[RMDB]
RNA sequence: GGGAACGACUCGAGUAGAGUCGAAAAACCCAUGAACCAUGUCAGGUCCUGACGGAAGCAGCAUUAAGUGGAUCCUCAUAUGUGCCGUAGGGUAGCCGAGAUUUAGCUGUCGACUUCGGUAACGUUUAUGAUAUGCGUUCGAUACAAAGGUGCAUGGCGUUAUGAUUUAGUUCGCUAAAUCAUAACGAAAAGAAACAACAACAACAAC
Reactivity to 2A3 in 0.01 (KOAc 150mM, MgCl2 10mM, bicine 150mM(pH8.5), 24C), signal-to-noise 8, nucleotides 027 to 156: a000c020c000c000a020u120g070a020a030c020c010a020u030g060u080c040a050g040g090u060c000c030u060g040a030c060g010g020a070a020g030c050a000g000c030a060u130u120a180a040g060u080g070g050a080u100c000c030u060c040a070u080a020u170g030u030g010c010c010g030u030a020g000g000g040u030a020g040c020c060g090a070g020a110u080u160u210a030g000c010u020g030u040c010g060a130c020u020u030c030g010g010u070a120a040c010g030u050u070u070a110u090g070a070u030a030u140g020c040g020u010u030c000g010a010u030a120c050a030a080a010g030g020u020g010c010a030u030g060g000
Reactivity to DMS in 0.01 (KOAc 150mM, MgCl2 10mM, bicine 150mM(pH8.5), 24C), signal-to-noise 4, nucleotides 027 to 156: a120c020c000c010a180u000g010a060a050c010c020a060u000g020u000c040a080g030g010u000c030c020u010g010a110c070g020g010a160a130g030c030a090g010c030a120u000u000a060a110g020u010g030g000a120u010c030c040u020c040a110u000a060u000g010u000g040c030c030g010u010a090g000g020g020u010a120g020c010c020g000a120g000a110u010u000u010a120g000c050u000g000u000c070g010a160c020u000u000c020g030g030u000a040a070c040g020u000u000u000a070u020g020a070u000a050u000g020c090g040u010u010c030g020a170u010a070c050a060a060a060g010g020u000g000c020a090u000g020g020
Chemical mapping of a 207-nucleotide RNA with 2A3 and DMS. For DMS, 13,686 sequencing reads were counted. For DMS the reverse transcriptase was MarathonRT. Conditions: 150 mM KOAc, 10 mM MgCl2 and 150 mM bicine (pH 8.5), 24 C.